[RMDB]
RNA sequence: GGGAACGACUCGAGUAGAGUCGAAAAAUAGGGAUCUAUACACACAAGCUCUGCGCGCAUUUAAAAUUCGCACAGACCAUGAAUUGCCUAUCGCCUCUGGCAGUCCAGUAAUUGUAGAACGCAAUCGAGCUGACACUAGAUUCGUCUAGUGUCAGCUAAAAGAAACAACAACAACAAC
Reactivity to 2A3 in 0.01 (KOAc 150mM, MgCl2 10mM, bicine 150mM(pH8.5), 24C), signal-to-noise 1, nucleotides 027 to 126: a000u060a030g040g000g030a020u030c020u140a100u100a170c060a010c020a010c000a130a050g010c050u000c010u050g010c010g020c000g000c020a010u030u110u200a110a170a070a070u110u110c040g010c020a000c010a010g010a010c000c000a080u140g020a090a030u080u040g050c020c000u020a080u100c020g000c030c010u000c050u040g030g000c040a020g030u000c020c000a020g070u140a040a040u090u030g000u020a050g000a130a040c030g000c020a020a100u040c020g020
Reactivity to DMS in 0.01 (KOAc 150mM, MgCl2 10mM, bicine 150mM(pH8.5), 24C), signal-to-noise 2, nucleotides 027 to 126: a090u010a030g010g010g040a030u000c030u000a080u010a090c200a080c170a090c100a030a120g000c140u000c030u000g010c010g000c040g040c140a060u000u010u010a090a100a150a090u020u000c040g010c040a070c020a000g000a110c100c140a070u000g000a020a010u000u000g000c020c010u020a040u000c140g020c000c050u000c040u010g000g010c050a090g010u010c020c010a080g000u000a080a070u010u000g030u000a050g020a040a080c170g010c150a070a050u010c140g010
This 177-nucleotide RNA was probed chemically with 2A3 and DMS. It was measured as part of the RMDB library OK2TRN. The 2A3 profile rests on 1,128 reads. For 2A3 the reverse transcriptase was SuperScript II with manganese. The RNA was probed in 150 mM KOAc, 10 mM MgCl2 and 150 mM bicine (pH 8.5) at 24 C.